[RMDB]
RNA sequence: GGGAACGACUCGAGUAGAGUCGAAAAACACCAAAACUGAAAACGGAAGGCAAUCCUUCCACGACGAUACUUACUUUCCUUUUAUCGUCGUUACUACUGGCAUAGCCACAAAGGAGAACAAACAUGAGCGCGGACACUGACUUCGGUCAGUGUCCAAGAGAGUCGGUUACUUCGGUAACCGACUCUCAAAAGAAACAACAACAACAAC
Reactivity to 2A3 in 0.01 (KOAc 150mM, MgCl2 10mM, bicine 150mM(pH8.5), 24C), signal-to-noise 1, nucleotides 027 to 156: a000c130a070c000c020a000a010a010a090c090u170g050a000a020a000a070c030g000g000a000a010g020g100c210a050a130u270c020c000u000u090c000c000a000c000g000a020c000g000a000u010a010c030u050u010a000c000u070u080u010c010c000u000u030u000u040a000u000c000g010u030c000g000u020u100a000c030u030a020c010u000g040g000c030a140u170a230g000c080c020a050c070a020a020a050g030g060a110g030a040a020c060a130a080a000c050a100u120g110a200g200c050g010c190g010g000a000c000a000c000u000g040a000c000u000u060c120g000g030u000c000a000g000u000g000u000c000c000a000a000